[RMDB]
RNA sequence: GGGAACGACUCGAGUAGAGUCGAAAAUAAAUCUCAAAACCGUCGUGCCUUGGUUGUCAUGGCUUCAAUACUUGAGCAUUCCUCGAUACGGCUAUGCGGCUUUGCAGCAUAAUGAAUUUUUGGGACAGCACAGCACUUAAUUCGUUAAGUGCUGUGCAAAAGAAACAACAACAACAAC
Reactivity to 2A3 in 0.01 (KOAc 150mM, MgCl2 10mM, bicine 150mM(pH8.5), 24C), signal-to-noise 1, nucleotides 027 to 126: u060a020a050a040u000c010u000c000a010a010a030a010c070c050g040u030c010g030u030g000c010c010u000u040g080g000u070u060g050u080c020a030u070g030g000c000u070u070c050a050a060u070a090c020u050u080g020a030g010c030a070u130u160c020c010u040c040g010a030u000a110c040g030g000c000u000a030u080g000c010g000g020c000u100u080u180g030c070a010g000c000a010u040a030a090u160g060a060a060u040u040u020u030u030g080g000g030a050c020a000
Reactivity to DMS in 0.01 (KOAc 150mM, MgCl2 10mM, bicine 150mM(pH8.5), 24C), signal-to-noise 1, nucleotides 027 to 126: u020a090a100a180u000c010u000c030a050a030a070a090c190c070g000u000c040g060u000g010c030c010u010u000g000g000u000u000g010u000c070a050u000g000g000c030u000u000c240a080a100u010a070c170u000u030g000a030g010c100a130u000u000c070c020u030c070g000a020u000a090c170g000g000c000u000a020u000g010c020g010g000c000u000u000u000g010c070a060g010c030a030u000a040a060u000g040a060a170u000u020u000u000u000g010g010g030a070c180a160
This 177-nucleotide RNA was probed chemically with 2A3 and DMS. The 2A3 profile rests on 1,035 reads. Reactivities are given for positions 27 through 126. The reactions ran in a buffer of 150 mM KOAc, 10 mM MgCl2 and 150 mM bicine (pH 8.5), at 24 C.